[RMDB]
RNA sequence: GGGAACGACUCGAGUAGAGUCGAAAACCUGCGUGGGUUAUCCACGGCGGAAGCGGCUUGAGUAAUCAGCCUUCGACCGCCAGCUAACAAGCAGGCUUAAACCCGGAGGGAAGCAAUUCAGCACGGGGACCUGUCCGUGGGGAGGCGAAACGGAUGGCUUUUAUACUGUGUUCGCACAGUAUAAAAGAAAAGAAACAACAACAACAAC
Reactivity to 2A3 in 0.01 (KOAc 150mM, MgCl2 10mM, bicine 150mM(pH8.5), 24C), signal-to-noise 4, nucleotides 027 to 156: c000c000u000g000c020g020u090g040g180g020u120u140a070u140c040c050a080c100g000g000c000g000g030a050a010g010c020g020g000c090u250u250g060a040g020u260a220a210u060c010a010g000c000c000u050u140c040g040a030c010c010g000c010c000a010g030c020u070a060a010c030a090a050g000c000a000g020g000c000u070u130a070a060a070c000c010c000g020g020a060g010g020g010a030a030g000c040a050a120u150u150c030a030g040c050a040c060g010g010g000g030a020c000c010u040g030u040c020c020g030u060g020g040g010g000a050g020g020c060g020a070a030a010c010g020g030a040u030g060g000
Reactivity to DMS in 0.01 (KOAc 150mM, MgCl2 10mM, bicine 150mM(pH8.5), 24C), signal-to-noise 3, nucleotides 027 to 156: c000c010u010g060c010g000u000g060g030g020u000u000a030u010c040c120a060c120g020g040c010g020g000a080a300g020c300g010g000c000u000u010g040a040g040u020a150a200u000c040a080g000c020c010u000u040c020g000a300c010c000g000c000c010a180g030c070u000a090a110c030a100a090g010c000a030g020g000c020u000u000a040a100a170c000c030c000g010g010a130g000g000g010a100a090g010c090a080a110u000u000c060a120g030c060a090c000g020g010g000g000a040c050c030u000g000u000c010c020g030u000g000g010g030g000a110g010g020c040g030a090a110a050c040g000g010a060u010g010g000
An RNA of 207 nucleotides, treated with 2A3 and DMS and read out base by base. The 2A3 profile rests on 3,243 reads.